Chemical mapping of a 207-nucleotide RNA with 2A3 and DMS.

[RMDB]
RNA sequence: GGGAACGACUCGAGUAGAGUCGAAAACGCCGCAAACAGCGGGUUUCAGAUUAAAAUAUUUAAGUAUAUUGUUCGCAGCCAUUUCGCCCAAGUUUUUGCGCGAUAAGCCCACUUUAAUGAUACUAAUUGCACCCGCAGAAUAAGAUAAUAAUUGACGUAUCUUAACUUAUUUCGAUAAGUUAAGAUAAAAAGAAACAACAACAACAAC
Reactivity to 2A3 in 0.01 (KOAc 150mM, MgCl2 10mM, bicine 150mM(pH8.5), 24C), signal-to-noise 2, nucleotides 027 to 156: c010g100c020c040g000c100a030a080a090c050a060g000c010g000g030g040u020u070u120c050a010g020a090u130u130a100a100a060a140u180a080u000u060u080a050a040g000u030a060u030a100u250u080g040u160u070c050g000c040a050g050c000c030a020u040u040u060c040g020c030c050c050a030a030g010u020u080u010u190u090g010c070g000c000g000a000u010a070a020g010c000c040c020a000c020u020u010u040a050a030u060g090a030u020a080c020u060a090a100u040u010g000c030a010c010c000c000g000c040a030g080a070a090u090a040a020g020a040u110a180a040u110a090a050u210u100g040a020c030g050
Reactivity to DMS in 0.01 (KOAc 150mM, MgCl2 10mM, bicine 150mM(pH8.5), 24C), signal-to-noise 2, nucleotides 027 to 156: c050g020c050c050g020c080a060a050a060c070a150g050c020g010g020g040u000u000u000c030a120g010a210u000u010a080a060a110a100u010a050u000u000u030a090a140g000u000a080u000a050u010u000g000u000u000c040g010c080a100g010c010c040a150u000u010u000c020g020c020c010c000a020a150g030u000u000u000u000u000g030c090g050c030g030a080u000a060a100g020c010c010c030a090c080u000u000u000a110a100u010g010a120u010a050c080u010a070a140u010u010g000c150a070c000c000c010g010c020a110g000a050a100u000a080a070g000a180u000a060a060u010a030a130u000u000g010a060c080g000
The reactions ran in a buffer of 150 mM KOAc, 10 mM MgCl2 and 150 mM bicine (pH 8.5), at 24 C.
For DMS, 3,487 sequencing reads were counted.
For 2A3 the reverse transcriptase was SuperScript II with manganese.
Reactivities are rounded to 0.1 and cut off at 0 and 3.
For 2A3, 1,077 sequencing reads were counted.